[RMDB]
This 177-nucleotide RNA was probed chemically with 2A3 and DMS. For DMS, 3,518 sequencing reads were counted. Source: RMDB library OK2TST, as collected in RNAgym. The 2A3 profile rests on 3,931 reads. The RNA was probed in 150 mM KOAc, 10 mM MgCl2 and 150 mM bicine (pH 8.5) at 24 C. 2A3 adducts were read by reverse transcription with SuperScript II with manganese.

RNA sequence: GGGAACGACUCGAGUAGAGUCGAAAACGCAACAGUGUGCGCGCGCAUGGAACGGCUCGAACGGUCCGGCGAUAUAUUGGGCUAUACGGUUAUCCUGCGCUCCGACGCGGUGGACCUGCCGGUGCGAGUCGGUAAUAUCGUUCGCGAUAUUACCGACAAAAGAAACAACAACAACAAC
Reactivity to 2A3 in 0.01 (KOAc 150mM, MgCl2 10mM, bicine 150mM(pH8.5), 24C), signal-to-noise 3, nucleotides 027 to 126: c030g010c020a080a040c040a140g080u070g000u060g140c040g000c010g000c000g010c070a070u100g050g080a090a070c040g020g080c040u040c130g090a140a060c070g050g000u000c000c000g060g030c040g010a020u070a010u010a020u170u140g020g020g030c010u030a020u050a120c030g010g010u050u050a070u160c000c010u020g020c010g000c020u030c010c020g090a100c040g020c000g050g190u080g030g000a030c010c000u020g000c000c020g030g000u000g000c020g020a050
Reactivity to DMS in 0.01 (KOAc 150mM, MgCl2 10mM, bicine 150mM(pH8.5), 24C), signal-to-noise 3, nucleotides 027 to 126: c080g000c040a100a090c090a080g000u020g040u000g010c030g000c100g000c020g000c060a060u000g000g030a090a120c070g020g000c000u000c090g020a050a130c130g020g000u020c030c010g000g020c060g010a110u010a100u020a110u000u010g000g000g010c060u000a100u010a110c170g000g010u010u000a120u010c010c000u010g030c060g020c010u010c080c060g000a110c090g020c020g010g010u010g000g000a060c040c020u000g010c020c010g030g000u000g010c070g000a120